[RMDB]
RNA sequence: GGGAACGACUCGAGUAGAGUCGAAAAACGAGUGAUUUGACCUCUCUGGGCCUCAGUUUCUUCACUUGUAAAUGCGAUUAAAUUACUCAUCUUUCUGUGUUGUCCUAAGAUUUAAUGGGAUGGUACAUUUCAAGUUCUUAGUACUAUGCCUGACAUGCCAGCUCAAUAGGUUCGCCUAUUGAGCUGGAAAAGAAACAACAACAACAAC
Reactivity to 2A3 in 0.01 (KOAc 150mM, MgCl2 10mM, bicine 150mM(pH8.5), 24C), signal-to-noise 2, nucleotides 027 to 156: a000c020g000a010g030u020g010a070u140u040u160g010a050c020c010u090c030u000c060u170g120g110g000c020c060u110c030a040g000u000u110u020c010u020u050c020a040c030u000u000g010u090a050a070a060u130g070c010g040a020u020u110a070a160a020u100u060a020c010u010c010a070u020c070u000u110u010c050u070g050u010g010u090u030g010u000c020c030u060a040a060g050a300u060u020u190a050a040u160g000g010g030a000u010g000g140u020a020c020a110u070u160u120c090a090a050g100u050u050c010u070u190a000g000u030a000c010u030a020u070g150c010c000u020g010a020c030a060u150g050